[RMDB]
RNA sequence: GGGAACGACUCGAGUAGAGUCGAAAAUCGCCUUUUCUUCCUUUCUUCUACCCACUGUUCGAGGAUCUCCUCCCUCUCCUUCGAGGACGGGUUCGCGACGGGUUGGCUCAUCCUGAGAUCGGGGAGCCUCGACGAUCUCUUUGAUCUCCUGAAGGAGGUAUCUCAACUGGUUCGCCAGUUGAGAUACAAAAGAAACAACAACAACAAC
Reactivity to 2A3 in 0.01 (KOAc 150mM, MgCl2 10mM, bicine 150mM(pH8.5), 24C), signal-to-noise 2, nucleotides 027 to 156: u070c020g140c020c000u080u060u060u030c030u010u070c000c040u020u110u090c030u050u010c030u100a080c010c000c010a110c100u180g100u180u030c020g000a010g070g030a110u060c040u000c040c010u020c020c000c000u040c010u040c020c040u070u080c040g080a020g030g010a010c030g010g000g040u030u160c020g040c020g100a130c080g100g030g050u040u040g030g020c000u010c010a040u040c000c020u060g010a030g000a080u030c040g000g000g010g000a010g000c000c000u020c000g040a050c030g050a060u040c050u000c020u130u080u170g030a030u000c010u000c070c060u090g040a080a020g020g020a030g030